[RMDB]
RNA sequence: GGGAACGACUCGAGUAGAGUCGAAAACUGCGCAACGAGCAGGCGCAGCGGCAAGGCGGCAUCGACAGCCGCGAAAUCGGCAGCAACGAUUUAAUCCGCGCUGUUCGCCGCCUGCUUGACGGCCAGCCAGCCCUCCAGUAUUCGUACUGGAGGGCUGAAAAGAAACAACAACAACAAC
Reactivity to DMS in 0.01 (KOAc 150mM, MgCl2 10mM, bicine 150mM(pH8.5), 24C), signal-to-noise 3, nucleotides 027 to 126: c000u000g030c060g030c050a080a240c080g020a120g030c030a210g000g020c020g000c080a090g030c010g050g000c080a140a110g010g050c010g010g010c040a040u030c270g000a020c140a050g040c030c040g000c040g000a010a080a070u010c000g060g000c050a110g030c230a150a300c100g000a000u000u010u060a210a150u050c200c000g030c250g000c000u000g010u000u030c190g030c000c010g000c050c000u000g000c050u000u010g010a060c090g000g000c010c030a070g000c070
Reactivity to 2A3 in 0.01 (KOAc 150mM, MgCl2 10mM, bicine 150mM(pH8.5), 24C), signal-to-noise 3, nucleotides 027 to 126: c000u020g010c030g000c060a060a140c090g040a050g040c050a020g040g000c010g000c030a030g000c020g000g000c040a100a110g040g000c020g000g000c010a030u060c050g070a100c020a020g050c050c050g000c000g000a000a010a010u050c000g040g010c050a060g030c040a090a060c010g020a030u020u070u190a140a120u070c020c010g010c020g020c030u010g050u110u070c020g000c000c000g000c000c010u000g000c000u000u040g020a000c020g030g040c010c000a000g020c020